[RMDB]
RNA sequence: GGGAACGACUCGAGUAGAGUCGAAAAAGGUCGGACCGCGGGGAGGUGGAGAUGCCAUGCCGACCCGAAGAGGAAAGAAGAACACGGACGCGAACCCGUAAGUGGAACCCUGAUCCUUUAUUGGGGGAAAGAGUCCCGUUCGCGGGACUCAAAAGAAACAACAACAACAAC
Reactivity to 2A3 in 0.01 (KOAc 150mM, MgCl2 10mM, bicine 150mM(pH8.5), 24C), signal-to-noise 3, nucleotides 027 to 129: a030g020g000u020c000g020g010a080c000c020g020c020g010g010g000g020a030g000g000u040g000g050a100g000a000u150g080c040c040a080u160g000c020c000g040a060c000c000c030g000a060a000g040a070g010g030a000a010a010g010a000a000g000a040a030c030a000c060g000g000a010c060g000c010g010a030a020c040c000c010g030u030a030a000g030u030g090g020a070a070c000c000c000u010g020a080u060c010c040u030u120u130a200u190u150g000g000g000g000g010a030a090a000
Reactivity to DMS in 0.01 (KOAc 150mM, MgCl2 10mM, bicine 150mM(pH8.5), 24C), signal-to-noise 1, nucleotides 027 to 129: a000g040g020u030c040g010g000a130c050c090g040c000g090g010g000g000a040g040g030u010g010g030a110g040a070u060g020c000c070a140u060g010c070c040g000a080c020c040c060g030a000a000g000a110g020g010a020a040a000g030a000a000g030a070a060c090a140c060g000g000a080c100g050c010g060a060a060c020c050c060g020u030a110a020g010u020g000g050a080a130c020c000c040u050g030a110u060c120c050u000u000u000a130u070u040g020g000g000g000g000a000a000a000
Chemical mapping of a 170-nucleotide RNA with 2A3 and DMS. Reactivities are rounded to 0.1 and cut off at 0 and 3. For 2A3 the reverse transcriptase was SuperScript II with manganese. It was measured as part of the RMDB library 15KLIB. The reactions ran in a buffer of 150 mM KOAc, 10 mM MgCl2 and 150 mM bicine (pH 8.5), at 24 C.